This 177-nucleotide RNA was probed chemically with 2A3 and DMS. Source: RMDB library OK2TRN, as collected in RNAgym. Conditions: 150 mM KOAc, 10 mM MgCl2 and 150 mM bicine (pH 8.5), 24 C. For DMS the reverse transcriptase was MarathonRT.
RNA sequence: GGGAACGACUCGAGUAGAGUCGAAAACGGCGUGUCGGGGUACAGACACGCGCGCUCGCGGGUUCGGCUGCCUUCAAAAGGAAGUACGCGGCUGACGGUUUGCGGAGCAAGAGCACCUCUACCGUGGGAAGUAGAGAUACUUCGGUAUCUCUACUUCAAAAGAAACAACAACAACAAC
Reactivity to 2A3 in 0.01 (KOAc 150mM, MgCl2 10mM, bicine 150mM(pH8.5), 24C), signal-to-noise 5, nucleotides 027 to 126: c030g050g000c010g010u020g010u010c020g030g040g050g150u170a100c040a060g040a010c000a000c020g010c010g000c040g010c010u030c010g040c010g050g090g000u150u080c010g020g000c000u020g010c010c000u000u020c050a220a220a120a060g230g010a010a010g020u070a070c100g010c010g030g000c010u010g010a020c030g040g080u080u190u220g040c030g070g020a030g020c020a060a020g050a020g060c030a040c030c010u000c020u060a050c020c020g030u050g050g100
Reactivity to DMS in 0.01 (KOAc 150mM, MgCl2 10mM, bicine 150mM(pH8.5), 24C), signal-to-noise 5, nucleotides 027 to 126: c090g020g010c000g010u000g000u000c010g010g000g010g010u010a080c160a110g010a020c000a010c010g000c010g020c100g020c040u000c020g010c040g010g000g010u000u010c040g010g010c030u000g010c010c010u010u010c070a090a110a150a170g000g010a040a030g000u010a110c240g010c010g010g020c040u000g000a030c060g000g010u000u000u010g020c030g000g010a070g010c040a110a090g010a110g000c050a070c050c010u010c060u000a060c030c040g010u010g000g010